[RMDB]
RNA sequence: GGGAACGACUCGAGUAGAGUCGAAAAGAUAUGGAAUGUGUACUAUCCCAACAGCUAUUGUCGGAAACGACAAUAGACAUGGGACGUACUGCAUUCCUAAGUCAAAAGUCCAGCUUCGGCUGGACAACUAACCCUUCAAGUUCGCUUGAAGGGUUAGAAAAGAAACAACAACAACAAC
Reactivity to DMS in 0.01 (KOAc 150mM, MgCl2 10mM, bicine 150mM(pH8.5), 24C), signal-to-noise 5, nucleotides 027 to 126: g010a050u010a300u000g000g000a010a000u000g020u010g010u000a000c010u000a300u000c000c010c000a030a100c300a190g010c000u010a000u000u000g010u000c000g020g000a120a090a240c010g010a010c000a000a020u010a000g020a030c090a220u010g000g000g020a060c300g010u000a000c020u000g050c010a010u000u000c000c000u000a030a100g000u010c070a080a100a170a140g010u000c010c010a000g010c010u000u010c300g020g020c010u010g010g010a010c000a010a110
Reactivity to 2A3 in 0.01 (KOAc 150mM, MgCl2 10mM, bicine 150mM(pH8.5), 24C), signal-to-noise 2, nucleotides 027 to 126: g030a010u080a060u160g010g020a010a010u000g040u010g000u020a010c010u020a070u040c000c010c010a060a070c100a050g050c010u000a000u000u010g010u000c010g010g080a110a070a100c020g000a000c000a000a000u010a000g010a010c010a070u060g000g010g000a010c010g000u000a000c010u070g020c000a010u010u000c010c000u020a170a030g070u020c050a000a010a120a160g010u000c000c000a000g000c010u090u090c300g180g000c000u000g000g010a000c000a000a000
Chemical mapping of a 177-nucleotide RNA with DMS and 2A3. Source: RMDB library TTRDES, as collected in RNAgym. The 2A3 profile rests on 9,793 reads. Reactivities are rounded to 0.1 and cut off at 0 and 3. Conditions: 150 mM KOAc, 10 mM MgCl2 and 150 mM bicine (pH 8.5), 24 C.